RNA sequence: GGGAACGACUCGAGUAGAGUCGAAAACCCGUAAUGCAUGUGGCACCAAUGUGCCUCUACAAUUAGGAUUUUCAACUGGUGUGAACUUUGUUGUUCAGCCAGUUGGUGUUGUAGACACUGAGUGGGGAAGGCUCGGGCUUCGGCCCGAGCAAAAGAAACAACAACAACAAC
Reactivity to 2A3 in 0.01 (KOAc 150mM, MgCl2 10mM, bicine 150mM(pH8.5), 24C), signal-to-noise 3, nucleotides 027 to 129: c020c000c000g010u100a050a030u210g080c050a000u070g000u130g020g000c010a050c010c000a060a050u180g030u050g010c000c000u000c020u020a000c000a010a030u090u070a050g220g010a160u190u010u000u180c010a010a010c000u000g000g000u180g030u010g070a000a000c000u000u020u090g300u300u030g020u050u050c000a000g000c020c000a020g000u000u000g000g000u030g000u000u000g010u000a030g010a000c010a000c030u020g070a060g090u040g020g040g000g030a030a020g040

An RNA of 170 nucleotides, treated with 2A3 and read out base by base. Reactivities are rounded to 0.1 and cut off at 0 and 3. Conditions: 150 mM KOAc, 10 mM MgCl2 and 150 mM bicine (pH 8.5), 24 C. For 2A3 the reverse transcriptase was SuperScript II with manganese. For 2A3, 2,880 sequencing reads were counted.